The record gives the reactivity of an RNA of 177 nucleotides to DMS and 2A3. For 2A3, 13,203 sequencing reads were counted.

RNA sequence: GGGAACGACUCGAGUAGAGUCGAAAACAUGAUGUGGACCCUGCUUGAGUUCAGGGCAUGCAGUUGGUUUAGUCACCUGAUUUUAAUGCAGGAUUCUAUUCACACUGAGCAGCACCUAGAAAUGGCCACAUCAAAGCAUUUUCGAAUGCUUUGAUGUAAAAGAAACAACAACAACAAC
Reactivity to DMS in 0.01 (KOAc 150mM, MgCl2 10mM, bicine 150mM(pH8.5), 24C), signal-to-noise 8, nucleotides 027 to 126: c080a130u000g010a090u010g010u000g020g010a080c040c000c010u000g010c030u000u000g010a070g010u000u000c050a050g010g000g020c050a070u000g010c030a060g010u000u010g020g010u000u000u000a060g010u000c160a110c010c010u000g000a040u000u010u010u010a060a100u020g010c000a010g010g000a160u000u000c020u010a040u000u000c010a040c070a060c050u000g000a080g010c040a080g000c030a090c020c010u000a080g010a050a060a060u000g000g010c040c120
Reactivity to 2A3 in 0.01 (KOAc 150mM, MgCl2 10mM, bicine 150mM(pH8.5), 24C), signal-to-noise 8, nucleotides 027 to 126: c040a080u260g030a080u130g130u060g080g020a050c000c000c000u010g000c010u050u080g070a050g020u070u060c030a010g010g000g020c010a010u090g000c000a000g030u140u140g070g030u050u080u050a030g030u050c030a070c180c010u000g040a070u030u100u120u300a200a110u300g010c010a000g000g020a020u070u020c020u030a030u000u020c030a040c000a000c120u040g020a010g030c020a010g000c020a140c020c020u040a050g070a060a110a040u110g070g010c030c010
Description: For DMS the reverse transcriptase was MarathonRT. The reactions ran in a buffer of 150 mM KOAc, 10 mM MgCl2 and 150 mM bicine (pH 8.5), at 24 C. Values cover nucleotides 27 to 126.